Source: RMDB library OK2TRN, as collected in RNAgym. Chemical mapping of a 177-nucleotide RNA with 2A3 and DMS. For DMS the reverse transcriptase was MarathonRT.
RNA sequence: GGGAACGACUCGAGUAGAGUCGAAAAGUUGUGUGCUCUAAGGUGCCCCGGGCCUACCAGGCAUUUGCGUAGCCAGGGCGGAGAUAACUGGGUGUGUUCUUCUUGCCCACCCUAGAGUUACACGUUCCAUACGUGGCAGCUUCGGCUGCCACGUAUGAAAAGAAACAACAACAACAAC
Reactivity to 2A3 in 0.01 (KOAc 150mM, MgCl2 10mM, bicine 150mM(pH8.5), 24C), signal-to-noise 1, nucleotides 027 to 126: g180u200u110g000u020g000u000g010c020u030c000u000a000a050g000g050u000g010c000c000c000c000g060g010g070c070c010u020a020c020c010a080g200g070c170a150u200u120u120g050c110g000u010a000g010c000c010a050g030g010g000c060g040g040a110g070a170u180a170a060c040u100g010g000g110u110g000u010g020u080u090c090u110u010c000u000u150g010c060c020c020a010c000c000c000u030a010g020a000g000u040u060a000c000a010c010g000u060u060c010
Reactivity to DMS in 0.01 (KOAc 150mM, MgCl2 10mM, bicine 150mM(pH8.5), 24C), signal-to-noise 1, nucleotides 027 to 126: g000u010u000g010u000g020u000g000c000u000c000u000a010a020g000g020u000g020c000c010c000c070g010g000g010c150c040u000a000c020c020a090g010g000c240a170u000u000u000g020c150g020u000a030g020c010c020a130g020g000g020c160g000g000a070g000a080u000a100a060c030u000g000g020g020u000g010u000g010u000u000c150u000u000c050u020u000g000c080c010c000a060c010c000c000u010a010g010a030g020u000u000a010c030a030c010g010u000u010c020